[RMDB]
RNA sequence: GGGAACGACUCGAGUAGAGUCGAAAACUCAGAGAUAUCACCAAAUCGUAUCAGAAAGAAUUAACUAGCGACUAAAGCGCUAAUGAACAUGGGCAUGUAGCCCCUGCUCCGCAACGAUGCUUUUCUGACACUCAGCCAACAACCUCGCCUGCGCCGCCAGCGGGGUUAGGUUCGCCUAACCCCGCUGAAAAGAAACAACAACAACAAC
Reactivity to 2A3 in 0.01 (KOAc 150mM, MgCl2 10mM, bicine 150mM(pH8.5), 24C), signal-to-noise 1, nucleotides 027 to 156: c070u090c040a000g010a000g010a070u040a040u170c060a030c040c000a100a000a050u070c060g000u070a030u180c020a020g090a040a070a000g030a010a020u040u020a080a080c050u000a020g010c010g060a050c100u220a110a040a050g080c060g020c030u050a000a060u070g010a020a000c010a040u030g000g010g000c020a030u180g150u120a100g000c000c000c000c000u000g060c010u090c020c000g100c040a010a010c050g040a040u090g030c010u110u020u050u090c050u050g000a000c000a000c040u040c010a070g030c100c000a000a070c030a000a020c050c010u000c000g060c000c010u050g000c010g100c140c000g070c100